[RMDB]
RNA sequence: GGGAACGACUCGAGUAGAGUCGAAAAUGUAUUCGGCUUAUACAAGAAUAUGUGCACAGGUAGUCCUUCUAUAGUUGAAUUUAAUAGGUUGGCUACCUGUGACUGGACUGAAAGUGGUGAUUACACCGAUAUAACACUUCUUCGGAAGUGUUAUAUCAAAAGAAACAACAACAACAAC
Reactivity to DMS in 0.01 (KOAc 150mM, MgCl2 10mM, bicine 150mM(pH8.5), 24C), signal-to-noise 5, nucleotides 027 to 126: u010g010u000a060u000u000c020g010g010c040u000u010a100u010a090c080a090a140g010a050a120u000a040u000g010u010g010c020a010c000a010g000g010u000a010g000u000c000c030u000u000c000u000a020u000a080g010u000u000g010a140a120u000u010u010a070a020u000a010g000g010u000u000g010g010c000u000a010c000c000u000g010u000g000a010c030u000g000g010a250c060u010g000a080a110a070g010u000g010g010u000g000a120u000u000a070c030a040c070c040
Reactivity to 2A3 in 0.01 (KOAc 150mM, MgCl2 10mM, bicine 150mM(pH8.5), 24C), signal-to-noise 5, nucleotides 027 to 126: u120g030u040a090u020u020c010g030g000c040u090u110a100u030a270c050a070a020g030a080a020u110a050u170g060u140g040c010a000c010a000g010g000u000a000g030u030c010c000u010u000c010u020a070u020a060g070u050u150g090a160a150u130u080u130a100a020u020a010g080g020u010u020g010g000c000u000a010c000c000u000g000u000g000a000c000u000g000g000a020c010u020g030a070a050a040g060u070g070g010u040g020a100u090u120a060c020a000c020c020